[RMDB]
RNA sequence: GGGAACGACUCGAGUAGAGUCGAAAACAAACAAACAAGGGUCCGAAACCAUCUAAGGUGAUAAAGAUGGAAUAUACGCUGUAAAAAUAAGCGUAGAAUCACCGACGGACCCACAAGAUCGGAUAAACGCUAAUCCAUAGUUCGCUAUGGAUUAGCGAAAAGAAACAACAACAACAAC
Reactivity to DMS in 0.01 (KOAc 150mM, MgCl2 10mM, bicine 150mM(pH8.5), 24C), signal-to-noise 3, nucleotides 027 to 126: c140a110a250a170c170a160a060a180c240a110a140g000g030g000u010c000c000g000a170a110a160c010c000a010u000c040u010a150a080g040g000u010g010a090u060a050a070a120g000a040u000g030g000a140a070u030a160u000a010c010g010c000u000g000u020a030a080a110a140a080u040a030a030g000c020g000u000a020g000a140a080u010c000a020c040c040g000a130c010g040g010a010c000c000c000a020c060a070a100g000a120u010c040g060g000a100u030a090a080a110
Reactivity to 2A3 in 0.01 (KOAc 150mM, MgCl2 10mM, bicine 150mM(pH8.5), 24C), signal-to-noise 2, nucleotides 027 to 126: c010a010a090a000c020a010a100a010c040a010a140g010g000g000u000c020c000g070a050a010a030c040c020a050u100c050u090a060a070g040g040u080g030a140u110a090a060a020g020a000u110g050g090a110a000u130a020u000a020c000g000c000u050g000u190a060a090a080a000a000u240a180a000g000c000g010u020a000g000a000a010u050c000a010c010c000g020a000c000g000g000a000c000c000c000a000c000a000a000g000a040u130c050g040g000a020u080a070a130a030
Source information:
Chemical mapping of a 177-nucleotide RNA with DMS and 2A3. High DMS reactivity at an A or C suggests that its Watson-Crick edge is free. Reactivities are given for positions 27 through 126. The data come from the RNA Mapping Database (RMDB), library OK1LIB. For DMS, 3,517 sequencing reads were counted.